[RMDB]
RNA sequence: GGGAACGACUCGAGUAGAGUCGAAAAGAAUCACCGUACCUAUUUAGGUCUACGCUCCAAGAUCGGUGGAUAGCAGCCCUAUCAAUAUCUAGGAGAACUGUGCUAUGUUUAGAAGAUUAGGUAGUCUAUUACACAGCCAUGUUCGCAUGGCUGUGAACGUAGUACUCGAGUUCGCUCGAGUACUACGAAAAGAAACAACAACAACAAC
Reactivity to 2A3 in 0.01 (KOAc 150mM, MgCl2 10mM, bicine 150mM(pH8.5), 24C), signal-to-noise 4, nucleotides 027 to 156: g090a030a050u100c030a010c050c020g010u040a040c010c010u050a130u200u170u200a020g000g050u030c010u050a030c030g010c030u020c000c000a030a000g000a100u030c030g060g020u040g040g040a020u040a050g050c070a010g000c000c010c010u050a060u120c060a150a000u040a030u170c020u060a070g010g010a060g020a090a120c070u090g010u040g100c020u060a030u120g090u080u090u040a070g040a170a030g000a090u090u100a060g090g030u030a030g050u020c030u040a100u050u150a070c000a000c000a000g000c000c010a000u000g020u020u070c110g000c100a000u000g000g000c020u000g000u000g000a000a000
Reactivity to DMS in 0.01 (KOAc 150mM, MgCl2 10mM, bicine 150mM(pH8.5), 24C), signal-to-noise 1, nucleotides 027 to 156: g010a160a050u000c060a220c020c000g020u000a070c040c020u020a200u010u000u000a030g000g010u000c060u000a050c090g000c060u000c020c000a050a100g020a060u000c050g030g050u000g020g010a060u000a100g000c000a230g000c100c060c020u000a160u010c040a050a130u010a080u000c070u000a070g000g000a130g010a060a030c070u000g000u000g010c040u010a050u000g010u000u000u000a090g000a090a080g020a070u000u000a030g000g000u010a050g010u010c030u010a130u010u000a190c000a020c000a000g000c000c000a010u000g040u000u000c280g000c000a040u000g000g010c000u000g040u000g000a000a070

Structure probing data (2A3 and DMS) for a 207-nucleotide construct. DMS adducts were read by reverse transcription with MarathonRT. For 2A3, 2,109 sequencing reads were counted. The RNA was probed in 150 mM KOAc, 10 mM MgCl2 and 150 mM bicine (pH 8.5) at 24 C. For DMS, 2,630 sequencing reads were counted.